Chemical mapping of a 177-nucleotide RNA with DMS and 2A3.
For DMS, 12,717 sequencing reads were counted.
The 2A3 profile rests on 36,289 reads.
The reactions ran in a buffer of 150 mM KOAc, 10 mM MgCl2 and 150 mM bicine (pH 8.5), at 24 C.
[RMDB]
RNA sequence: GGGAACGACUCGAGUAGAGUCGAAAAGAUAUGGAUUCAUGAGGAGAGGACUUACAACAGAGGACGCUCGGAAACGAGCGUCUCCCCACCUGUUGUAAGUCUCCCCACCUCCCAUGAAUCCUAAGUCGAUUAUAUGUUACUUCGGUAACAUAUAAUCAAAAGAAACAACAACAACAAC
Reactivity to DMS in 0.01 (KOAc 150mM, MgCl2 10mM, bicine 150mM(pH8.5), 24C), signal-to-noise 9, nucleotides 027 to 126: g000a080u010a300u010g000g000a010u000u010c000a000u000g010a240g010g000a030g010a150g010g000a030c000u000u000a000c010a010a010c000a020g010a210g010g000a020c000g020c010u000c000g010g000a070a100a210c000g010a010g010c000g010u000c000u000c030c010c010c030a300c100c010u000g010u000u000g000u000a000a010g000u010c020u000c050c040c020c060a300c090c000u000c000c000c000a010u000g000a020a000u000c000c000u000a010a100g000u000c090
Reactivity to 2A3 in 0.01 (KOAc 150mM, MgCl2 10mM, bicine 150mM(pH8.5), 24C), signal-to-noise 3, nucleotides 027 to 126: g070a040u130a060u240g000g020a000u000u010c010a000u010g090a250g210g030a020g010a040g130g010a010c000u000u000a000c000a010a000c000a000g010a020g040g000a000c000g000c000u000c000g030g030a060a070a050c010g000a000g000c000g000u000c020u030c010c000c000c010a030c010c000u000g000u010u000g000u000a000a000g000u000c000u010c000c000c000c000a040c000c000u000c000c000c000a000u000g000a000a000u010c000c000u010a100a020g130u070c070